RNA sequence: GGGAACGACUCGAGUAGAGUCGAAAAGAUAUGGAAAGACGGCAGCUUUUGACGGAAGGCGAUCGGAAACGAUCGUACUUCCGAUAAGCUGCGUCUUUCCUAAGUCAAAUCCGCCUUCGGGCGGAAACUACAAGAUAGCGUUCGCGCUAUCUUGUAGAAAAGAAACAACAACAACAAC
Reactivity to 2A3 in 0.01 (KOAc 150mM, MgCl2 10mM, bicine 150mM(pH8.5), 24C), signal-to-noise 2, nucleotides 027 to 126: g000a020u070a030u110g000g020a000a010a010g010a020c120g300g220c010a000g030c010u030u180u250u300g300a150c030g000g000a010a000g010g010c010g010a010u000c000g010g030a080a040a050c030g000a010u000c000g000u020a130c000u000u030c010c000g000a000u000a000a000g000c000u000g000c000g000u020c000u000u000u010c000c000u000a000a000g000u030c000a000a000a080u020c000c010g030c020c000u070u110c250g140g000g000c000g010g000a030a020a010
Reactivity to DMS in 0.01 (KOAc 150mM, MgCl2 10mM, bicine 150mM(pH8.5), 24C), signal-to-noise 2, nucleotides 027 to 126: g010a040u000a300u010g000g000a000a010a010g000a020c000g030g060c010a010g020c000u000u000u010u010g020a300c120g000g000a030a010g000g010c000g000a000u010c020g030g000a100a080a200c000g030a000u000c000g000u000a060c010u000u000c000c020g010a040u000a010a020g000c000u000g010c010g000u000c000u000u000u000c010c000u010a010a070g000u000c030a070a140a150u010c010c000g010c010c000u000u010c220g070g020g030c010g010g010a000a010a110
Record summary:
Structure probing data (2A3 and DMS) for a 177-nucleotide construct. Conditions: 150 mM KOAc, 10 mM MgCl2 and 150 mM bicine (pH 8.5), 24 C. It was measured as part of the RMDB library TTRDES. 2A3 adducts were read by reverse transcription with SuperScript II with manganese.